This 177-nucleotide RNA was probed chemically with DMS and 2A3. 2A3 adducts were read by reverse transcription with SuperScript II with manganese. For DMS, 3,651 sequencing reads were counted. Conditions: 150 mM KOAc, 10 mM MgCl2 and 150 mM bicine (pH 8.5), 24 C. High 2A3 reactivity points to a flexible backbone, as in loops and unpaired stretches.

RNA sequence: GGGAACGACUCGAGUAGAGUCGAAAACAAAAAGGUUAACGAGCGUAAUCUGGGAGAUGUAAAAGGAGUUGACAUCUCCUAGAACACCGAAAGGUGGCGGUACGUUAACCGCAUCUUUCGAAAGAAACGAUUUAUGAGCAUUCGUGCUCAUAAAUCGAAAAGAAACAACAACAACAAC
Reactivity to DMS in 0.01 (KOAc 150mM, MgCl2 10mM, bicine 150mM(pH8.5), 24C), signal-to-noise 3, nucleotides 027 to 126: c090a050a100a090a080a040g010g000u010u020a010a010c060g000a190g010c000g010u000a080a110u010c000u020g040g000g000a020g000a000u010g010u000a030a060a070a050g070g000a110g030u000u010g030a070c020a000u000c000u000c000c000u000a020g010a000a300c020a020c050c000g000a100a130a090g000g070u000g010g000c000g000g000u030a020c050g020u050u000a000a000c000c000g000c220a010u030c140u000u010u000c080g000a030a070a080g000a090a070a110
Reactivity to 2A3 in 0.01 (KOAc 150mM, MgCl2 10mM, bicine 150mM(pH8.5), 24C), signal-to-noise 4, nucleotides 027 to 126: c070a010a110a000a010a010g030g000u010u010a010a000c000g000a010g160c030g040u040a050a140u020c000u000g000g000g010a010g000a000u010g020u060a070a040a090a110g190g040a140g040u110u090g070a000c000a000u000c000u000c000c000u000a000g000a020a010c000a000c000c010g010a020a020a010g050g000u010g020g020c010g020g050u060a100c010g010u010u010a000a000c000c000g000c000a030u020c020u020u090u070c060g090a070a050a060g070a020a100a030